Record summary:
Chemical mapping of a 207-nucleotide RNA with DMS and 2A3.

RNA sequence: GGGAACGACUCGAGUAGAGUCGAAAAAAGAUGCUGAAGUCAUUGCUAGAGCAGCCCAAACACUUCAAAUGAACAGUGUGUCAAUACAGUCAAGUAGCUUGACCACAUUAGAUAGCCUAGGUCGUAGUAGGACAAGUUCCACAGCUGAGGAUAGCAGUGUUCCCUUUAAUUUCGAUUAAAGGGAACAAAAAGAAACAACAACAACAAC
Reactivity to DMS in 0.01 (KOAc 150mM, MgCl2 10mM, bicine 150mM(pH8.5), 24C), signal-to-noise 3, nucleotides 027 to 156: a070a110g030a120u000g000c030u000g010a120a120g020u000c050a060u000u000g030c020u020a070g030a100g010c030a120g000c000c000c020a130a090a070c060a060c030u000u010c060a090a060a130u000g010a080a090c080a090g010u000g010u010g030u000c030a060a070u000a070c050a100g020u010c140a080a140g020u010a060g000c100u000u010g000a030c020c040a060c050a130u000u000a090g000a090u000a090g020c000c030u000a080g010g030u000c040g030u000a080g020u000a090g020g000a100c040a070a070g020u000u000c010c030a090c030a050g010c020u000g010a090g000g000a090u010a050g000c030a120g030
Reactivity to 2A3 in 0.01 (KOAc 150mM, MgCl2 10mM, bicine 150mM(pH8.5), 24C), signal-to-noise 4, nucleotides 027 to 156: a000a000g100a060u060g000c040u050g020a100a020g030u070c040a100u080u180g030c040u080a000g010a000g060c010a020g010c000c010c000a040a110a000c070a010c020u080u060c060a030a150a220u270g020a090a040c040a080g030u020g000u040g020u080c020a010a020u040a120c040a050g110u060c060a170a080g030u020a020g180c080u010u030g000a010c040c000a020c020a040u060u080a030g070a100u070a020g000c000c010u020a030g020g010u040c020g040u030a050g020u010a020g020g040a050c050a090a030g040u040u020c030c030a070c030a060g030c030u050g010a000g040g040a050u100a050g040c020a020g030
The reactions ran in a buffer of 150 mM KOAc, 10 mM MgCl2 and 150 mM bicine (pH 8.5), at 24 C. For 2A3, 2,691 sequencing reads were counted. It was measured as part of the RMDB library OK3TST.